Structure probing data (2A3 and DMS) for a 207-nucleotide construct. In probing experiments dimethyl sulfate is read out at A N1 and C N3, which are open when not base-paired. 2A3 is a SHAPE reagent: it acylates the 2'-hydroxyl of flexible nucleotides of all four kinds. The RNA was probed in 150 mM KOAc, 10 mM MgCl2 and 150 mM bicine (pH 8.5) at 24 C. It was measured as part of the RMDB library M2RFPK. The DMS profile rests on 4,639 reads. Values cover nucleotides 27 to 156.
[RMDB]
RNA sequence: GGGAACGACUCGAGUAGAGUCGAAAAUGAGAUAGCUAAAUCACCUCGGUAUGAUUAGGGUGAGACCUAGGAACCGUAUGGGUAUUCUCAAAGGAAGCUUUUGCAGUGACGCCCAUGUAAGUGGGAUAAGAACCAACCCACUUCGGUGGGUUGGUAACGACCAUAUCUAGUUCGCUAGAUAUGGUCGAAAAGAAACAACAACAACAAC
Reactivity to 2A3 in 0.01 (KOAc 150mM, MgCl2 10mM, bicine 150mM(pH8.5), 24C), signal-to-noise 4, nucleotides 027 to 156: u130g010a020g030a050u100a060g040c070u110a040a070a110u100c040a060c020c020u040c030g030g030u180a130u200g110a190u130u120a050g040g000g020u050g070a050g020a030c000c010u030a030g040g050a020a050c000c000g060u110a060u090g040g000g020u020a040u090u010c050u010c010a040a050a000g070g020a070a030g070c010u040u070u130u130g040c100a060g010u020g090a030c060g000c000c000c000a010u050g060u140a120a100g010u010g010g020g010a020u070a080a060g060a010a000c000c000a000a010c000c000c000a010c000u040u020c060g050g000u000g000g000g000u000u000g000g010u000a000a010
Reactivity to DMS in 0.01 (KOAc 150mM, MgCl2 10mM, bicine 150mM(pH8.5), 24C), signal-to-noise 2, nucleotides 027 to 156: u010g000a120g020a130u000a100g020c060u000a090a090a130u000c030a060c010c000u000c010g010g030u000a120u000g010a210u020u000a070g030g010g030u000g000a190g000a120c030c020u000a090g010g020a140a060c020c020g000u000a050u000g020g020g000u000a070u010u000c050u000c020a050a120a160g040g000a130a160g010c050u010u000u010u000g040c060a060g020u020g000a100c060g000c030c010c000a030u000g000u000a060a160g010u020g000g000g010a060u000a030a110g000a120a050c000c000a030a070c000c000c000a020c000u010u000c180g040g040u000g030g010g000u000u000g010g000u000a010a060